Annotation:
The data come from the RNA Mapping Database (RMDB), library OK2TRN. The record gives the reactivity of an RNA of 177 nucleotides to 2A3 and DMS. For 2A3, 2,103 sequencing reads were counted.
RNA sequence: GGGAACGACUCGAGUAGAGUCGAAAAACUUCGGCACCGUCUUUGAUGACCUUCUUGCCGGCCAGAUCGACGGUGAAUGAAUCGGUUUCGAUCACCGGCUGCUCCAACUCGGCGGCCGCGGUGUUACACGUAACAUCCAGUUCGCUGGAUGUUACGUAAAAGAAACAACAACAACAAC
Reactivity to 2A3 in 0.01 (KOAc 150mM, MgCl2 10mM, bicine 150mM(pH8.5), 24C), signal-to-noise 2, nucleotides 027 to 126: a040c000u060u040c010g030g000c000a010c020c000g070u080c080u120u140u060g090a200u070g060a080c000c020u110u150c050u070u150g050c050c000g000g020c080c040a050g000a030u020c010g000a000c020g030g070u090g060a080a120u140g040a030a030u080c080g140g000u060u040u120c020g010a050u030c010a000c020c020g050g000c030u010g010c000u000c030c020a110a160c080u060c130g040g010c010g000g000c000c000g010c020g000g000u040g000u040u070a150c140
Reactivity to DMS in 0.01 (KOAc 150mM, MgCl2 10mM, bicine 150mM(pH8.5), 24C), signal-to-noise 3, nucleotides 027 to 126: a060c080u000u000c010g010g020c010a060c020c030g000u000c010u000u000u010g020a180u000g000a050c110c110u000u000c140u000u000g020c070c130g000g020c010c040a100g010a050u000c090g000a040c010g010g000u000g000a040a120u020g000a050a030u000c090g020g010u000u000u000c020g020a060u000c010a120c040c010g020g010c010u010g020c060u010c020c030a070a070c120u000c250g000g000c040g020g000c010c020g010c090g020g010u000g010u000u000a030c170